Structure probing data (DMS and 2A3) for a 177-nucleotide construct. Values cover nucleotides 27 to 126. It was measured as part of the RMDB library OK2TRN.
RNA sequence: GGGAACGACUCGAGUAGAGUCGAAAACGUGCUCUAUCCCCUGAGCUACGAGGGCGGGGACGCCUUUGAAUACCUGACUAAAACCUAGCCGUUCGCCGCGCCGGCCGGGACUGUCCGAUAUUCGGUGGUCAAUGAAAGAUUUCGAUCUUUCAUUGACAAAAGAAACAACAACAACAAC
Reactivity to DMS in 0.01 (KOAc 150mM, MgCl2 10mM, bicine 150mM(pH8.5), 24C), signal-to-noise 6, nucleotides 027 to 126: c110g020u000g000c010u000c020u000a130u000c020c010c020c120u000g000a050g010c020u010a070c110g020a110g010g010g010c050g010g010g000g000a160c050g020c030c010u000u000u000g000a080a070u010a070c040c020u000g020a060c090u020a080a070a100a090c050c030u000a080g010c020c020g010u000u000c060g020c040c030g000c040g010c180c010g010g020c020c010g000g010g010a070c100u010g000u000c010c040g010a060u000a070u000u000c020g000g020u000g010
Reactivity to 2A3 in 0.01 (KOAc 150mM, MgCl2 10mM, bicine 150mM(pH8.5), 24C), signal-to-noise 4, nucleotides 027 to 126: c010g060u060g020c020u010c020u040a230u150c030c000c000c020u040g020a020g010c040u090a050c040g050a090g010g040g000c040g000g010g040g020a040c000g020c000c000u060u030u100g050a060a020u080a090c010c020u040g050a080c030u150a020a030a070a110c010c020u010a010g000c010c000g020u040u080c080g010c040c000g010c010g000c020c000g010g000c000c010g020g000g030a050c020u040g030u040c000c010g000a000u010a070u110u090c030g020g050u090g080